[RMDB]
RNA sequence: GGGAACGACUCGAGUAGAGUCGAAAAGACUGGCUGUCAAGCCAGCACGGAGCCGUGAGCACCUACAUAUCGCGAUAUGUAUCAUCCUUAGGCGCUCCUUUUUUGGCUAGUUAUGGAUGAAAUUAGAGGGAUGGCAUUUGUUCGCAGGUGCCAUCCCAAAAGAAACAACAACAACAAC
Reactivity to 2A3 in 0.01 (KOAc 150mM, MgCl2 10mM, bicine 150mM(pH8.5), 24C), signal-to-noise 9, nucleotides 027 to 126: g070a090c010u010g000g010c010u040g120u300c100a070a030g000c000c000a000g000c010a010c040g100g060a020g020c030c040g090u120g020a010g010c020a010c020c000u020a010c010a010u050a010u050c060g030c110g200a020u010a000u040g080u030a080u050c000a010u010c000c010u030u050a020g030g000c010g010c010u030c010c000u080u190u040u030u120u190g030g000c030u030a050g070u150u070a080u160g020g010a010u010g030a030a060a110u180u120a100g060a150
Reactivity to DMS in 0.01 (KOAc 150mM, MgCl2 10mM, bicine 150mM(pH8.5), 24C), signal-to-noise 9, nucleotides 027 to 126: g010a300c000u000g000g010c010u000g000u070c300a080a040g010c000c010a010g010c050a110c110g000g010a070g020c010c010g000u020g010a040g000c030a060c050c020u000a010c020a020u000a020u000c100g010c230g010a080u010a010u000g000u030a060u010c030a030u000c040c010u000u010a050g000g000c060g010c040u000c000c040u010u000u020u020u050u030g010g000c020u000a070g010u020u020a110u030g000g000a040u010g000a040a090a110u030u030a050g010a300